[RMDB]
RNA sequence: GGGAACGACUCGAGUAGAGUCGAAAAGCGCUUUUCGCCUUUGGUUCACUGUUCGGCUUCACUGGAAUGCUGGUCGCCGUCCCGGCUGCGGCGGCUGUCGGGGUGCUUGUGCGUUUUGCAUUGAAUACACUGAGUACGAUUUCGAUCGUACUCAGUGAAAAGAAACAACAACAACAAC
Reactivity to DMS in 0.01 (KOAc 150mM, MgCl2 10mM, bicine 150mM(pH8.5), 24C), signal-to-noise 2, nucleotides 027 to 126: g010c080g030c100u000u000u000u010c070g010c040c040u000u010u000g010g020u010u010c040a060c070u000g010u000u000c060g010g020c030u010u000c070a070c080u010g000g010a060a060u000g020c070u000g000g020u000c030g000c020c020g010u010c070c020c030g010g020c050u000g010c030g020g010c090g010g000c030u000g010u020c050g010g010g010g020u000g000c090u000u010g010u000g010c030g020u010u000u020u000g000c060a100u020u010g000a100a100u010a160
Reactivity to 2A3 in 0.01 (KOAc 150mM, MgCl2 10mM, bicine 150mM(pH8.5), 24C), signal-to-noise 1, nucleotides 027 to 126: g060c020g020c080u000u040u220u090c070g000c010c000u100u100u130g070g030u140u070c020a040c100u060g020u030u070c000g110g030c000u070u010c040a020c090u060g050g070a050a030u160g040c040u080g000g090u030c020g000c000c000g020u040c050c060c000g000g050c010u020g030c000g040g080c000g060g070c010u000g000u000c030g010g010g020g020u000g030c040u100u070g060u030g050c010g010u020u010u190u180g000c030a070u150u130g050a020a010u150a080